[RMDB]
RNA sequence: GGGAACGACUCGAGUAGAGUCGAAAAGUGAUUAGCGGCAAAAGAGCUGUGCGACAAGGAGUCGUUAACCUAGUCAAAUAUGCCAAAUAAAAGGGGUAAAGCACAGAAGAAUAAAAGGAGUAAUGGCUGCCUAAAGUUCAUUCGUGAACUUUAGGCAAAAAGAAACAACAACAACAAC
Reactivity to DMS in 0.01 (KOAc 150mM, MgCl2 10mM, bicine 150mM(pH8.5), 24C), signal-to-noise 2, nucleotides 027 to 126: g020u000g020a090u020u010a050g020c050g010g020c050a100a020a150a090g000a230g030c010u010g020u010g020c080g000a100c200a160a040g020g020a070g010u020c080g000u010u010a150a100c010c000u000a030g020u000c110a060a040a070u010a050u010g010c030c010a120a060a090u020a020a020a060a100g020g000g000g000u000a030a020a140g000c040a030c040a010g010a030a060g000a040a090u020a050a070a050a010g010g000a130g000u020a130a120u010g010g030c050
This 177-nucleotide RNA was probed chemically with DMS. The reactions ran in a buffer of 150 mM KOAc, 10 mM MgCl2 and 150 mM bicine (pH 8.5), at 24 C. The data come from the RNA Mapping Database (RMDB), library OK2TRN.